RNA sequence: GGGAACGACUCGAGUAGAGUCGAAAAGAUAUGGAGAGAACUACAUCGAUUCCGAAGAACUAGCUCGGAAACGAGCUAGGGAGGGGAUGCUCUCCUAAGUCAAAACAUGCGCCUUCGGGCGCAUGAACAUAACGGUUCUGUUCGCAGAACCGUUAUGAAAAGAAACAACAACAACAAC
Reactivity to DMS in 0.01 (KOAc 150mM, MgCl2 10mM, bicine 150mM(pH8.5), 24C), signal-to-noise 3, nucleotides 027 to 126: g000a010u000a040u000g000g000a020g010a030g010a150a130c270u010a190c010a010u000c020g030a300u000u020c020c010g000a080a140g020a130a210c000u000a010g000c000u000c000g010g000a000a010a030c000g000a020g000c000u000a010g020g010g000a010g050g000g020g000a030u000g000c020u010c000u000c000c000u000a000a060g000u000c000a140a070a120a300c010a010u000g000c000g010c000c010u010u020c200g010g010g000c000g000c010a000u000g000a080a170
Reactivity to 2A3 in 0.01 (KOAc 150mM, MgCl2 10mM, bicine 150mM(pH8.5), 24C), signal-to-noise 2, nucleotides 027 to 126: g000a010u020a000u070g000g000a010g010a000g030a210a170c250u200a020c240a020u040c020g250a250u300u250c020c010g160a300a010g020a010a010c010u000a010g000c000u000c010g000g000a030a000a000c000g000a000g000c000u010a000g010g000g000a000g000g010g040g000a000u020g000c000u010c000u000c000c000u000a000a000g020u010c000a080a000a140a060c010a000u000g000c010g000c010c010u080u120c300g140g000g000c000g000c000a000u000g000a000a000